[RMDB]
RNA sequence: GGGAACGACUCGAGUAGAGUCGAAAAAGAUCCACGCUACGGCGUGGAGCACACGUUCAUCCCUAUUGGGACGGAAGUAGGCAUAGUGCCGAAGGAACGCAUUAGUCAUGCGCUACGGCGCAUGACACACAUCAGAGUCACUUCGGUGACUCUGAAAGUAGUUCUAUAAGUUCGCUUAUAGAACUACAAAAGAAACAACAACAACAAC
Reactivity to 2A3 in 0.01 (KOAc 150mM, MgCl2 10mM, bicine 150mM(pH8.5), 24C), signal-to-noise 8, nucleotides 027 to 156: a010g090a050u000c000c000a000c000g000c000u030a040c260g110g000c000g000u000g000g000a000g000c010a020c010a010c030g000u020u010c000a010u030c000c000c000u150a300u160u300g000g000g010a010c020g020g010a020a000g010u020a010g020g000c030a080u110a240g180u160g150c000c000g000a010a000g040g010a010a020c020g000c040a080u070u140a040g000u000c000a000u000g000c000g000c010u030a030c260g090g000c000g000c000a000u000g010a000c000a000c000a000c000a050u050c010a000g000a000g000u000c000a000c020u060u130c210g090g000u000g000a000c000u000c000u000g000a000a000a000
Reactivity to DMS in 0.01 (KOAc 150mM, MgCl2 10mM, bicine 150mM(pH8.5), 24C), signal-to-noise 2, nucleotides 027 to 156: a090g020a100u000c000c000a020c010g010c010u010a100c260g070g020c000g030u000g010g010a030g000c030a120c100a090c040g000u000u000c020a160u000c000c000c000u010a210u020u000g030g000g020a030c050g000g010a060a070g000u000a140g010g000c010a200u000a100g000u000g000c020c020g000a100a140g010g010a120a060c040g000c040a070u000u000a100g020u000c050a040u000g000c010g010c000u000a060c250g100g030c000g010c000a000u000g020a000c000a020c130a040c110a120u010c020a050g010a030g000u010c020a000c010u010u000c300g060g020u000g000a010c000u000c000u000g000a000a010a060
About this RNA:
An RNA of 207 nucleotides, treated with 2A3 and DMS and read out base by base. For DMS the reverse transcriptase was MarathonRT. It was measured as part of the RMDB library M2RFPK. 2A3 adducts were read by reverse transcription with SuperScript II with manganese. The 2A3 profile rests on 7,801 reads. The RNA was probed in 150 mM KOAc, 10 mM MgCl2 and 150 mM bicine (pH 8.5) at 24 C.